Chemical mapping of a 177-nucleotide RNA with DMS and 2A3. It was measured as part of the RMDB libraries RFM100 and RFMREP. The RNA was probed in 150 mM KOAc, 10 mM MgCl2 and 150 mM bicine (pH 8.5) at 24 C. The 2A3 profile rests on 1,194 reads. High 2A3 reactivity points to a flexible backbone, as in loops and unpaired stretches.
RNA sequence: GGGAACGACUCGAGUAGAGUCGAAAAUAAUAGUUGUCAGUUUUACCUCAGUGUUGAAUUUAAUUAUAUAGGAACAAAAUAUUCCUCAGUAAAUUUGCUUGCUAAAUAUUCUGUCACAUUUACUUCCAGUAAUGUUUUAGUUCGCUAAAACAUUACUAAAAGAAACAACAACAACAAC
Reactivity to DMS in 0.01 (KOAc 150mM, MgCl2 10mM, bicine 150mM(pH8.5), 24C), signal-to-noise 2, nucleotides 027 to 126: u030a090a100u030a120g000u010u010g000u000c020a070g010u000u000u050u000a070c080c100u030c040a040g030u000g010u000u000g010a080a030u020u010u020a020a080u070u050a140u040a200u010a060g010g000a040a060c060a110a100a120a070u010a290u000u000c020c000u000c100a090g000u000a010a030a070u030u000u000g000c050u020u000g020c110u010a040a100a070u000a040u000u000c010u000g010u020c060a040c030a050u020u000u000a060c100u000u000c060c020
Reactivity to 2A3 in 0.01 (KOAc 150mM, MgCl2 10mM, bicine 150mM(pH8.5), 24C), signal-to-noise 3, nucleotides 027 to 126: u130a000a050u090a080g030u050u120g020u010c030a000g020u000u040u070u100a090c020c010u100c050a020g030u000g040u110u160g030a050a020u040u020u080a100a050u220u050a120u080a100u110a230g020g010a020a030c050a090a230a110a050u130a060u020u020c010c010u030c030a040g040u070a020a020a070u020u010u030g060c040u090u070g010c030u060a040a080a080u100a080u080u030c010u030g060u080c010a010c010a070u050u080u090a070c060u040u010c010c000